An RNA of 177 nucleotides, treated with DMS and 2A3 and read out base by base. The RNA was probed in 150 mM KOAc, 10 mM MgCl2 and 150 mM bicine (pH 8.5) at 24 C. DMS adducts were read by reverse transcription with MarathonRT.

RNA sequence: GGGAACGACUCGAGUAGAGUCGAAAAAUGUCCCUCAUUCUGUGUUCCUCCGUGAGCUCAGGGAAGACACUGGUUGGCAUCCAACAGCUUAGUCACAAAGGGAUUUGAUUGUUGGGAGUGCUGGUAUACAUCAUUUGUAGUUCGCUACAAAUGAUGUAAAAGAAACAACAACAACAAC
Reactivity to DMS in 0.01 (KOAc 150mM, MgCl2 10mM, bicine 150mM(pH8.5), 24C), signal-to-noise 6, nucleotides 027 to 126: a120u040g010u000c000c000c010u010c150a110u020u020c050u000g010u000g000u010u010c010c020u020c070c130g010u010g010a150g000c100u010c050a040g010g010g010a080a060g010a090c070a060c050u010g010g020u000u000g000g000c060a060u010c010c010a030a020c020a020g020c070u010u010a050g020u010c020a050c120a080a130a130g010g010g010a060u010u010u010g000a110u000u000g010u000u000g010g000g000a080g040u000g000c010u000g010g010u000a100u010
Reactivity to 2A3 in 0.01 (KOAc 150mM, MgCl2 10mM, bicine 150mM(pH8.5), 24C), signal-to-noise 5, nucleotides 027 to 126: a000u090g070u050c010c020c010u020c030a090u080u020c020u050g030u000g060u060u030c000c020u160c060c060g140u200g090a030g020c000u010c070a050g000g030g020a040a020g010a010c050a010c100u060g050g120u060u070g040g020c040a040u020c010c010a020a020c000a020g020c030u080u200a040g050u080c020a020c050a200a130a070g130g060g000a030u040u070u100g230a280u050u040g020u030u010g000g000g050a100g040u050g040c030u020g000g030u070a030u010